[RMDB]
RNA sequence: GGGAACGACUCGAGUAGAGUCGAAAAUGAGAAAAAGCUCGUUAAAGCGUUCGCCAUCACAGAGCCAGUGCUAGCACAGAUGGUCUUUAUUGACAGCCAAGGGAUCCGAAAGUUUUCUCAAUCCGACCCUGUGUAACACCUUCGGGUGUUACACAGGAAAAGAAACAACAACAACAAC
Reactivity to 2A3 in 0.01 (KOAc 150mM, MgCl2 10mM, bicine 150mM(pH8.5), 24C), signal-to-noise 3, nucleotides 027 to 126: u060g000a000g050a010a080a020a020a010g070c040u050c040g080u110u180a260a200a030g010c050g090u050u070c040g000c040c020a030u050c020a040c030a050g050a020g070c020c010a020g070u030g150c030u100a040g050c030a040c000a060g080a110u030g010g010u000c030u060u090u070a160u060u090g050a020c010a020g030c020c030a010a050g020g000g020a060u040c000c040g050a080a050a000g030u010u000u010u000c060u010c020a020a070u000c020c000g030a070c060
Reactivity to DMS in 0.01 (KOAc 150mM, MgCl2 10mM, bicine 150mM(pH8.5), 24C), signal-to-noise 2, nucleotides 027 to 126: u050g000a030g000a030a030a040a060a140g000c030u000c040g030u030u020a070a080a000g000c070g050u000u030c040g010c000c020a150u100c060a130c160a100g000a100g000c040c060a090g020u060g030c000u010a100g000c080a130c120a100g010a150u000g000g010u000c040u000u000u000a040u040u030g030a050c040a070g000c050c030a050a040g020g000g000a060u000c030c000g010a070a070a040g030u000u000u000u000c020u010c020a110a070u030c020c020g030a180c090